Conditions: 150 mM KOAc, 10 mM MgCl2 and 150 mM bicine (pH 8.5), 24 C. Structure probing data (DMS and 2A3) for a 177-nucleotide construct. Source: RMDB library OK2TRN, as collected in RNAgym.

RNA sequence: GGGAACGACUCGAGUAGAGUCGAAAACAGCCACAUUGUCACUGAGCUGAUUGGCGUAGGGAUGUGAAGCAUCAACUACCCACUGCACCUGUCUGGUGAUAAGAAAAUCGGCCAUUUGUGCUGCAUCACCAUCCUUCACAUUCGUGUGAAGGAUGGUAAAAGAAACAACAACAACAAC
Reactivity to DMS in 0.01 (KOAc 150mM, MgCl2 10mM, bicine 150mM(pH8.5), 24C), signal-to-noise 4, nucleotides 027 to 126: c030a080g020c100c040a040c120a070u000u010g010u000c110a070c190u000g000a150g020c010u010g000a040u000u000g020g020c160g020u000a030g010g000g000a010u000g000u000g010a170a120g030c030a020u000c000a060a110c010u000a020c020c000c000a300c110u010g000c040a030c040c040u000g010u010c130u010g000g010u000g010a040u010a040a070g010a070a080a040a060u010c010g010g000c020c020a150u010u010u010g010u000g000c020u010g000c100a130u000c090
Reactivity to 2A3 in 0.01 (KOAc 150mM, MgCl2 10mM, bicine 150mM(pH8.5), 24C), signal-to-noise 6, nucleotides 027 to 126: c020a010g080c060c020a070c030a090u070u130g100u120c050a040c130u120g000a040g040c010u000g010a060u030u140g050g010c150g000u010a020g000g040g010a000u030g090u080g300a200a030g150c000a010u010c010a050a220c020u000a010c000c010c000a000c040u050g020c010a030c030c020u190g140u290c140u110g020g010u020g040a100u090a140a030g140a050a080a010a020u060c020g020g000c000c010a050u070u060u120g060u080g010c000u030g010c020a080u100c020